[RMDB]
RNA sequence: GGGAACGACUCGAGUAGAGUCGAAAACUGCCGGCAGGACGCGUAGAAUCUGGACCGUCGGGGGCUGCAAGGUUCCCGAUAAUGGUUGUGAACCUUCUUCUUGAAGGCCUUCUGGACGGCGGUUCGAUAAAAGACGGCUAUUCGUAGCCGUCUUUUAAAAAGAAACAACAACAACAAC
Reactivity to DMS in 0.01 (KOAc 150mM, MgCl2 10mM, bicine 150mM(pH8.5), 24C), signal-to-noise 2, nucleotides 027 to 126: c000u000g010c000c010g020g000c030a040g010g000a030c180g020c030g070u030a080g000a130a130u000c040u040g000g000a020c020c010g030u000c000g000g000g010g010g010c030u000g010c300a070a110g040g010u000u000c000c000c000g010a020u000a020a110u040g000g010u000u010g000u000g040a010a090c040c000u000u000c000u000u040c150u030u030g000a050a020g010g010c030c030u020u020c010u010g000g030a090c000g000g000c000g000g000u000u000c110g020a100
Reactivity to 2A3 in 0.01 (KOAc 150mM, MgCl2 10mM, bicine 150mM(pH8.5), 24C), signal-to-noise 2, nucleotides 027 to 126: c000u010g000c000c000g020g030c000a040g000g010a010c070g030c060g090u140a030g050a060a110u020c050u070g080g050a000c000c000g040u060c000g000g010g020g000g000c020u060g060c070a130a050g060g000u010u000c000c000c000g000a020u070a060a190u290g000g000u010u000g090u070g040a090a090c000c000u010u040c020u130u040c020u060u240g000a010a000g000g010c000c000u020u010c010u020g140g030a180c000g000g000c000g010g000u030u020c000g030a020